The data come from the RNA Mapping Database (RMDB), library OK2TST. This 177-nucleotide RNA was probed chemically with 2A3 and DMS. The DMS profile rests on 10,905 reads. Reactivities are rounded to 0.1 and cut off at 0 and 3. DMS adducts were read by reverse transcription with MarathonRT. The RNA was probed in 150 mM KOAc, 10 mM MgCl2 and 150 mM bicine (pH 8.5) at 24 C.
[RMDB]
RNA sequence: GGGAACGACUCGAGUAGAGUCGAAAAUGGUGACCGACCCCUCCUCGGGAAGCCCUUCCAUCUCGAGAGAAGGCGACAGGUCCACCGCCACCAGGGGGACCUUCUCAAAUGUCUGAUGGAUGAUCCGACACUUCGUAAUUUUCGAAUUACGAAGUGUAAAAGAAACAACAACAACAAC
Reactivity to 2A3 in 0.01 (KOAc 150mM, MgCl2 10mM, bicine 150mM(pH8.5), 24C), signal-to-noise 4, nucleotides 027 to 126: u060g020g010u040g030a060c020c010g040a070c010c020c010c020u020c000c020u000c010g010g000g020a060a010g020c030c000c000u050u000c020c010a040u030c030u040c050g060a060g010a010g020a090a060g020g030c060g040a040c040a090g010g010u000c050c030a040c030c010g100c040c010a090c010c050a050g020g000g010g010g020a000c000c000u020u020c020u000c010a100a150a060u160g040u010c040u050g030a020u040g000g040a020u040g020a040u060c020c010g020
Reactivity to DMS in 0.01 (KOAc 150mM, MgCl2 10mM, bicine 150mM(pH8.5), 24C), signal-to-noise 8, nucleotides 027 to 126: u000g000g010u000g010a190c040c020g000a180c150c010c020c020u000c040c020u000c030g010g000g000a090a140g010c060c040c040u010u000c010c010a090u000c010u010c070g010a130g000a080g000a050a060g000g010c100g010a100c130a090g000g010u000c030c020a070c030c000g010c080c050a080c090c080a130g000g010g000g000g010a090c020c010u000u010c020u000c030a060a130a110u000g010u000c070u000g010a040u000g010g010a080u010g000a110u010c060c040g010